[RMDB]
RNA sequence: GGGAACGACUCGAGUAGAGUCGAAAACAAGCAGCCUCAGACAAGCAAUGUAUCACAGUAACAACUUUGCUGGAUGCACGGGAUACUAGAGAAAACAGGCAAGAGUUUUCAUUGAAUCCAACAAAAACAACCGUGUAGUUUUCGAACUACACGGUUGAAAAGAAACAACAACAACAAC
Reactivity to DMS in 0.01 (KOAc 150mM, MgCl2 10mM, bicine 150mM(pH8.5), 24C), signal-to-noise 2, nucleotides 027 to 126: c050a080a080g040c070a050g000c020c030u010c030a100g010a100c080a120a100g020c100a090a090u000g010u010a010u000c000a060c030a090g010u000a010a030c140a290a150c250u010u000u000g010c020u000g010g000a030u000g000c010a050c190g000g000g000a060u000a020c090u000a100g030a070g000a020a010a020a020c080a060g000g030c190a040a060g030a180g030u000u000u000u000c010a160u010u000g000a120a070u000c060c080a060a100c080a040a110a050a060a030
Reactivity to 2A3 in 0.01 (KOAc 150mM, MgCl2 10mM, bicine 150mM(pH8.5), 24C), signal-to-noise 1, nucleotides 027 to 126: c030a000a010g090c000a010g030c020c000u050c040a100g060a130c020a030a060g020c030a060a100u020g040u020a010u030c040a030c020a260g040u030a080a040c080a050a090c130u000u060u110g010c000u000g000g030a010u000g000c000a010c070g020g000g000a050u090a070c010u020a020g040a010g010a200a050a030a000c030a020g170g010c060a100a000g070a010g070u010u030u060u030c030a060u020u060g040a050a000u000c000c010a090a020c070a040a060a040a000a010